About this RNA: Chemical mapping of a 207-nucleotide RNA with 2A3. The 2A3 profile rests on 1,421 reads. The RNA was probed in 150 mM KOAc, 10 mM MgCl2 and 150 mM bicine (pH 8.5) at 24 C.
[RMDB]
RNA sequence: GGGAACGACUCGAGUAGAGUCGAAAACGGGAACGGCUCUUUCCAGUGUGGGGUGUGUGCCUGCCACCCUGGCCACAUGGGGCCUCGCUGUGAGUGUGGCGAGGACAUGCUGAGCACAGAUUCCUGCAAGGAGGCCCCAGAUCAUCCCUCCUGCAGAGCUGAGCUAUUAUUUCGAUAAUAGCUCAGCAAAAGAAACAACAACAACAAC
Reactivity to 2A3 in 0.01 (KOAc 150mM, MgCl2 10mM, bicine 150mM(pH8.5), 24C), signal-to-noise 2, nucleotides 027 to 156: c040g030g010g050a070a040c030g060g010c000u010c000u090u090u040c040c050a060g030u000g010u060g090g030g010g000u100g030u040g020u040g070c000c010u010g060c030c010a060c000c010c000u050g090g000c020c020a050c030a080u040g050g000g100g040c000c000u010c040g020c040u090g080u070g140a090g060u140g020u060g030g000c000g010a030g000g020a020c010a050u130g020c010u000g010a030g050c050a010c010a120g100a080u170u130c000c000u010g000c050a120a050g050g000a020g030g000c000c000c000c000a030g000a110u130c010a040u050c000c000c040u040c010c000u000g060c020a030g030a020